An RNA of 207 nucleotides, treated with 2A3 and read out base by base. The 2A3 profile rests on 1,000 reads. It was measured as part of the RMDB library M2RFPK. The reactions ran in a buffer of 150 mM KOAc, 10 mM MgCl2 and 150 mM bicine (pH 8.5), at 24 C.
RNA sequence: GGGAACGACUCGAGUAGAGUCGAAAAAGAUGGCAGGUUCACCCCGUACGGUGCGGAAGUUCGCGCUUCCGUGAAACGCGAAAAUCAGACGGUGGCUGCAAGUCGCAUCGCAAAACCGCGGCAAGUGUUAACCUGGACCUCUUCGGAGGUCCAGGAACCUCUAUACCUACUUCGGUAGGUAUAGAGGAAAAGAAACAACAACAACAAC
Reactivity to 2A3 in 0.01 (KOAc 150mM, MgCl2 10mM, bicine 150mM(pH8.5), 24C), signal-to-noise 2, nucleotides 027 to 156: a000g030a030u060g040g050c010a020g000g000u180u080c010a050c000c050c020c020g000u040a020c050g050g010u070g020c000g000g020a030a000g030u100u180c000g000c010g000c030u010u000c010c000g010u000g050a040a020a020c050g000c010g010a040a030a000a140u150c040a040g080a120c090g050g000u030g030g000c060u060g000c040a080a000g060u090c060g000c050a080u060c010g000c080a000a020a010a020c040c010g000c010g040g000c100a170a060g050u030g030u200u110a020a020c000c000u000g010g000a010c000c000u020c020u030u010c070g030g000a000g000g020u000c000c000a000g000g010a000a000